[RMDB]
RNA sequence: GGGAACGACUCGAGUAGAGUCGAAAAACACAAAAAAGGAGUUUAAAUUAGAUUUGCAAACGGACGGUACUAAAUACCGUCACUUUUACGUCUAACUUAUCGUUAACUCUGCAAAAAGAAAACAAGAAAAACAAGCGUGAGUUCGCUCACGCUUGAACUAAGUAGAUGGGUUCGCCCAUCUACUUAGAAAAGAAACAACAACAACAAC
Reactivity to DMS in 0.01 (KOAc 150mM, MgCl2 10mM, bicine 150mM(pH8.5), 24C), signal-to-noise 2, nucleotides 027 to 156: a150c040a100c010a000a020a080a140a210a210g000g000a010g000u000u000u000a070a030a010u020u000a010g000a050u000u000u000g100c010a000a020a000c130g040g050a000c020g030g080u000a010c040u010a030a000a300u000a000c000c000g020u010c000a000c000u000u000u000u000a010c000g000u000c010u000a010a010c020u010u000a070u000c200g030u000u000a010a020c020u000c000u000g000c120a030a110a120a070a100g020a040a050a070a080c060a050a060g010a090a050a120a070a200c010a020a010g010c010g040u010g010a020g010u000u020c300g020c020u000c010a000c000g020c010u000u000g000a020a030
Reactivity to 2A3 in 0.01 (KOAc 150mM, MgCl2 10mM, bicine 150mM(pH8.5), 24C), signal-to-noise 3, nucleotides 027 to 156: a000c020a000c050a010a040a010a030a000a040g040g000a040g010u050u080u090a070a070a040u040u010a020g010a050u050u060u250g050c060a030a030a020c040g010g010a000c000g000g000u020a020c040u260a150a050a070u060a000c010c010g010u000c000a070c000u010u010u000u050a020c010g000u000c000u000a020a030c030u080u090a050u170c030g100u030u030a020a010c010u010c020u050g040c040a010a130a060a080a060g060a040a060a010a010c070a110a080g120a070a100a030a000a000c010a000a000g010c000g000u000g000a000g010u020u170c210g020c120u010c000a000c000g010c000u000u000g000a000a000